[RMDB]
An RNA of 207 nucleotides, treated with DMS and 2A3 and read out base by base.
RNA sequence: GGGAACGACUCGAGUAGAGUCGAAAACCCAGUUCCGGGGCCGUUCACUGGAUCCGAAGCCUCUAGAAGGAUAAUAUAGGCAAUCCAUACCCUACUCCGACUCAAUACGUCCCCGUCGUACAGAAUGCAAGGGCAUCCCUGUUCGCAGGGAUGCCAACAAGUAAAUGAUGUUCGCAUCAUUUACUUGAAAAGAAACAACAACAACAAC
Reactivity to DMS in 0.01 (KOAc 150mM, MgCl2 10mM, bicine 150mM(pH8.5), 24C), signal-to-noise 2, nucleotides 027 to 156: c010c000c010a120g020u000u000c070c000g020g040g010g030c030c010g040u000u010c070a110c110u020g020g010a030u000c010c040g000a110a120g020c000c000u000c040u010a160g020a150a060g010g000a130u000a070a100u000a220u010a060g040g000c040a150a120u000c040c040a170u000a050c080c030c020u000a080c040u000c040c020g010a060c030u010c020a040a080u010a070c030g000u000c000c010c000c000g020u000c050g020u000a210c090a160g020a080a170u000g030c080a110a120g000g020g050c000a010u000c010c000c000u000g030u000u010c240g020c030a010g060g010g010a000u000g020c000c000a010a000
Reactivity to 2A3 in 0.01 (KOAc 150mM, MgCl2 10mM, bicine 150mM(pH8.5), 24C), signal-to-noise 4, nucleotides 027 to 156: c020c000c000a020g050u120u020c030c030g000g000g010g030c010c010g020u070u100c070a050c150u050g040g000a070u120c030c030g060a060a030g020c010c000u040c040u100a190g040a240a040g150g020a060u060a260a060u170a130u060a100g020g000c020a040a030u040c010c010a030u070a100c030c040c020u080a120c020u040c050c050g070a070c030u020c130a070a090u080a110c010g020u020c000c010c010c010g000u030c020g030u040a040c020a050g170a240a040u110g090c080a050a110g040g000g000c000a000u010c000c000c010u030g010u070u100c220g010c040a010g000g000g060a000u000g000c000c000a000a000
For DMS, 3,457 sequencing reads were counted.